[RMDB]
RNA sequence: GGGAACGACUCGAGUAGAGUCGAAAAAGGUCAUCAGGGGAGUAUUGUACACAUGCGCGUUAUUUGUUAAGUAUAAUGUGGAAAAGAUGCAGAAGUACAUCAAGAAUAAACUACCUGCACUGGCUACCCUCUCUCUAAAUUUCGAUUUAGAGAGAGGAAAAGAAACAACAACAACAAC
Reactivity to DMS in 0.01 (KOAc 150mM, MgCl2 10mM, bicine 150mM(pH8.5), 24C), signal-to-noise 6, nucleotides 027 to 126: a110g010g000u010c010a020u010c020a050g000g000g010g010a040g010u000a040u000u000g010u000a070c010a060c120a110u000g010c170g020c040g010u000u000a040u000u010u000g010u010u010a070a120g010u010a030u000a060a020u000g010u000g000g000a110a070a120a110g000a070u000g000c020a040g010a120a150g010u000a030c010a040u000c090a080a160g000a070a060u000a050a070a030c020u000a070c020c010u000g000c120a060c160u010g010g000c020u000a110c130
Reactivity to 2A3 in 0.01 (KOAc 150mM, MgCl2 10mM, bicine 150mM(pH8.5), 24C), signal-to-noise 5, nucleotides 027 to 126: a000g040g000u030c020a300u060c010a040g030g010g050g010a020g030u050a060u100u110g020u030a030c040a000c010a030u030g010c020g000c020g050u030u030a110u070u130u130g140u090u120a060a010g020u010a030u040a090a030u050g010u060g070g040a100a070a040a080g060a040u140g000c010a020g030a240a000g030u020a020c010a020u050c040a050a080g100a140a060u130a100a130a020c010u030a060c010c000u000g010c020a040c060u010g010g000c010u010a020c000

Chemical mapping of a 177-nucleotide RNA with DMS and 2A3. It was measured as part of the RMDB library OK2TRN. For 2A3, 6,947 sequencing reads were counted. The RNA was probed in 150 mM KOAc, 10 mM MgCl2 and 150 mM bicine (pH 8.5) at 24 C.